[RMDB]
RNA sequence: GGGAACGACUCGAGUAGAGUCGAAAAACACUGCUGGGAGAAGGAGGUUCAUGCUGGCCAGUUGGGAUGAAAGUCUUAGCUCCCCACUUGGUCUUCCCUGACACCACUGCAGUGGGGUGUUGGGGUGUAAUUUUAAGACCUUCGGGUCUUAAAAUUAAAAAGAAACAACAACAACAAC
Reactivity to 2A3 in 0.01 (KOAc 150mM, MgCl2 10mM, bicine 150mM(pH8.5), 24C), signal-to-noise 1, nucleotides 027 to 126: a010c010a000c020u060g000c030u100g010g000g030a070g010a010a070g010g080a020g080g030u070u040c020a050u180g060c090u060g080g050c030c020a020g020u110u030g030g000g050a030u080g070a030a050a050g100u020c050u140u120a090g070c010u010c050c000c000c000a050c030u080u170g080g060u010c100u080u100c010c000c000u010g010a020c000a020c020c000a080c010u050g060c020a050g080u040g010g020g000g000u000g010u010u060g000g000g010g030u020g030
Reactivity to DMS in 0.01 (KOAc 150mM, MgCl2 10mM, bicine 150mM(pH8.5), 24C), signal-to-noise 3, nucleotides 027 to 126: a090c030a050c030u000g000c020u000g010g010g000a090g010a110a060g010g010a060g010g010u000u000c050a050u000g000c110u000g020g020c040c080a050g020u010u000g010g010g010a060u000g000a070a070a100g000u010c060u010u000a100g010c070u000c030c050c010c070a050c090u000u000g020g000u000c040u000u010c020c000c010u010g000a020c030a010c000c000a040c060u010g010c090a020g020u000g010g010g010g010u000g010u000u000g010g000g010g030u010g010